Conditions: 150 mM KOAc, 10 mM MgCl2 and 150 mM bicine (pH 8.5), 24 C. Chemical mapping of a 177-nucleotide RNA with DMS and 2A3. For 2A3, 75,694 sequencing reads were counted. For DMS, 33,930 sequencing reads were counted.

[RMDB]
RNA sequence: GGGAACGACUCGAGUAGAGUCGAAAACAAAACUGUCCGGCUUUCACACCACUUUGUCCGUCUGUCUCGUGCUCACAAUGUCCCUCAGGUUGGGUGCACCGGACGUUGGACGCGCGGACAAAUGUCCGACGCGUCAUUAUUUCGAUAAUGACGCGUCAAAAGAAACAACAACAACAAC
Reactivity to DMS in 0.01 (KOAc 150mM, MgCl2 10mM, bicine 150mM(pH8.5), 24C), signal-to-noise 9, nucleotides 027 to 126: c090a110a050a090a090c100u010g010u000c000c010g000g010c060u010u010u010c060a080c110a090c060c060a070c070u010u010u010g010u010c010c000g000u010c060u020g010u000c010u010c300g020u010g000c010u010c040a070c030a020a020u010g000u010c030c020c070u010c080a080g010g020u000u000g000g000g000u000g000c040a050c030c120g010g010a010c010g010u010u020g010g010a060c100g010c250g010c020g010g000a020c020a030a050a070u020g010u010c110c110
Reactivity to 2A3 in 0.01 (KOAc 150mM, MgCl2 10mM, bicine 150mM(pH8.5), 24C), signal-to-noise 9, nucleotides 027 to 126: c040a000a070a010a040c060u060g040u050c010c020g040g020c050u070u180u140c070a070c030a040c070c020a070c060u070u060u110g020u020c010c010g030u030c080u110g030u010c010u020c070g020u020g010c010u010c020a060c010a030a050u070g070u080c030c020c000u080c060a050g080g030u040u030g050g020g020u060g010c010a010c010c040g010g020a010c010g020u020u070g030g020a030c040g020c020g000c010g040g020a000c010a010a070a020u190g020u020c050c040